[RMDB]
RNA sequence: GGGAACGACUCGAGUAGAGUCGAAAACUAAUUGUCAAAGGUUCUUUAUUUAACAUACCUAAUACGUUAGACUGCUCUAAUGAAAUUUCAUAUUCAUUUUGUAAAUCUUUCAACAUUUUUGCAGUUACCGUAGGAUACAUUUCGAUGUAUCCUACGGAAAAGAAACAACAACAACAAC
Reactivity to 2A3 in 0.01 (KOAc 150mM, MgCl2 10mM, bicine 150mM(pH8.5), 24C), signal-to-noise 2, nucleotides 027 to 126: c000u020a010a090u190u180g080u030c110a000a260a190g090g030u090u030c030u250u290u170a300u120u120u140a020a080c040a050u170a060c010c020u000a110a040u120a070c030g010u010u090a030g000a020c000u020g000c020u000c000u000a020a020u000g030a010a040a110u150u100u020c030a050u060a120u300u090c030a070u210u240u080u040g050u070a020a140a110u070c090u000u120u110c050a040a120c010a060u010u040u040u030u030g010c030a010g020u050u070a030
Reactivity to DMS in 0.01 (KOAc 150mM, MgCl2 10mM, bicine 150mM(pH8.5), 24C), signal-to-noise 2, nucleotides 027 to 126: c010u000a060a020u010u010g020u000c150a150a210a080g010g000u000u010c150u020u010u010a080u010u000u010a090a100c110a050u010a060c040c030u000a080a150u000a130c060g010u000u010a110g010a100c010u000g010c020u000c010u010a010a000u000g000a090a080a080u020u010u000c020a080u000a090u000u020c110a110u000u000u000u000g010u010a040a060a030u000c090u000u010u000c060a070a140c050a040u000u000u000u000u000g010c000a030g030u010u000a040